Chemical mapping of a 177-nucleotide RNA with 2A3 and DMS. Source: RMDB libraries RFM100 and RFMREP, as collected in RNAgym. Conditions: 150 mM KOAc, 10 mM MgCl2 and 150 mM bicine (pH 8.5), 24 C. 2A3 adducts were read by reverse transcription with SuperScript II with manganese.
RNA sequence: GGGAACGACUCGAGUAGAGUCGAAAACUAAACUAGCCCCAAUCAUCGAAAAUGGAGAAACCGACAGUGCACGUUGACGUAGACCCCCAAAGUCCGUUUGUGCUACAACUGCAGAAGAGUUUCCCACCUGCACUUGUUAAUUCGUUAACAAGUGCAGAAAAGAAACAACAACAACAAC
Reactivity to 2A3 in 0.01 (KOAc 150mM, MgCl2 10mM, bicine 150mM(pH8.5), 24C), signal-to-noise 7, nucleotides 027 to 126: c040u070a050a030a100c050u070a060g040c000c000c000c020a030a080u090c040a030u050c060g140a070a070a050a070u130g040g010a100g030a110a020a020c020c010g060a060c040a020g020u010g030c010a000c040g040u060u130g030a000c010g020u070a040g080a120c000c000c000c020c000a060a060a000g010u010c010c010g010u030u090u140g030u030g010c010u060a060c020a110a020c030u020g000c010a000g030a210a020g040a060g010u010u010u000c000c000c000a030c010
Reactivity to DMS in 0.01 (KOAc 150mM, MgCl2 10mM, bicine 150mM(pH8.5), 24C), signal-to-noise 4, nucleotides 027 to 126: c030u010a070a080a150c120u010a090g010c010c030c010c090a150a110u000c070a100u000c080g030a010a040a120a080u030g000g000a110g020a060a050a050c080c030g020a110c080a050g010u000g020c010a020c070g000u000u010g020a090c040g020u020a080g010a140c010c010c010c090c070a050a050a220g000u000c000c030g010u000u000u030g010u000g010c040u030a070c140a020a070c020u010g000c040a080g020a040a060g010a140g010u000u000u000c000c000c010a140c230